[RMDB]
The record gives the reactivity of an RNA of 177 nucleotides to DMS and 2A3. Source: RMDB library OK1LIB, as collected in RNAgym.
RNA sequence: GGGAACGACUCGAGUAGAGUCGAAAACGUCCGGCAACCUCCGAGAGCCUGGCGACCUAAACGGUCGUGUCACCUGUCGGCACCUGAUGUUUUCACUCAGUGCCAAAGCGCAGGCAAGGACAAGCCCUCAAGGCAUGCGCUUCGGUGCGUGCCUUGAAAAAGAAACAACAACAACAAC
Reactivity to DMS in 0.01 (KOAc 150mM, MgCl2 10mM, bicine 150mM(pH8.5), 24C), signal-to-noise 9, nucleotides 027 to 126: c140g000u020c020c030g000g000c140a080a150c120c090u000c040c060g020a130g000a140g000c030c010u000g020g000c000g000a030c000c000u000a070a110a090c230g000g010u000c000g010u010g000u030c110a190c120c000u000g000u030c130g000g010c000a020c130c080u010g010a010u050g020u010u020u030u020c170a050c050u010c020a050g010u000g000c000c000a060a110a040g020c110g010c020a010g000g000c070a110a100g010g000a040c070a100a140g000c010c010c040
Reactivity to 2A3 in 0.01 (KOAc 150mM, MgCl2 10mM, bicine 150mM(pH8.5), 24C), signal-to-noise 9, nucleotides 027 to 126: c040g030u020c010c000g010g010c060a110a110c020c030u140c070c070g130a110g000a010g160c000c040u040g040g000c000g010a010c000c000u110a210a150a030c130g000g010u000c020g000u020g090u070c020a040c050c010u030g050u080c040g010g000c010a040c030c100u030g020a050u090g110u110u080u090u110c050a070c040u020c000a010g000u010g020c000c000a070a080a010g070c090g000c010a000g010g010c040a040a050g040g000a010c010a020a020g030c000c010c000

The reactions ran in a buffer of 150 mM KOAc, 10 mM MgCl2 and 150 mM bicine (pH 8.5), at 24 C. For 2A3, 36,613 sequencing reads were counted.